[RMDB]
RNA sequence: GGGAACGACUCGAGUAGAGUCGAAAAGUCAGAUCCAUGGGAUGCAGGUUUCUGUUGGCUUCGAAUACGAACUUGACCACGUACUCUUCUACCUUGAAGACGAUACCGUAACCGCCUGUCGAAAGGUGGUAGAAGUCGUUGUUAGUCUCCGCAAACCUGCUUAUUCAGCAUUCGUGCUGAAUAAGCAAAAAGAAACAACAACAACAAC
Reactivity to DMS in 0.01 (KOAc 150mM, MgCl2 10mM, bicine 150mM(pH8.5), 24C), signal-to-noise 2, nucleotides 027 to 156: g010u000c040a100g000a150u000c030c040a150u000g000g000g000a150u000g020c030a080g030g000u010u010u010c060u010g040u000u000g010g030c080u010u000c060g010a130a150u000a030c050g010a030a090c040u000u000g030a080c040c030a150c060g010u010a060c080u000c070u000u000c010u000a050c050c060u010u000g020a050a040g000a070c030g020a070u000a030c050c190g030u000a110a070c010c000g050c000c000u000g010u000c100g020a160a080a040g020g050u000g000g000u000a000g030a070a150g000u000c000g060u020u000g030u000u000a090g000u010c000u000c030c010g000c030a050a050a060c120c030
Reactivity to 2A3 in 0.01 (KOAc 150mM, MgCl2 10mM, bicine 150mM(pH8.5), 24C), signal-to-noise 2, nucleotides 027 to 156: g080u050c020a000g040a090u000c020c040a060u090g080g000g040a030u050g040c010a040g070g060u000u020u090c030u070g090u160u090g020g020c060u030u000c070g080a040a060u090a110c030g040a130a030c030u040u100g060a030c010c080a020c040g000u060a030c030u000c000u030u000c000u020a130c060c010u000u080g030a040a060g010a020c000g030a010u080a120c080c000g020u060a020a070c010c020g030c050c060u060g030u120c040g080a100a030a000g000g010u000g000g000u000a000g010a070a020g040u060c020g000u020u020g050u010u040a020g030u040c040u010c110c000g030c040a000a030a070c060c000
Background: The record gives the reactivity of an RNA of 207 nucleotides to DMS and 2A3. The data come from the RNA Mapping Database (RMDB), library OK3TST.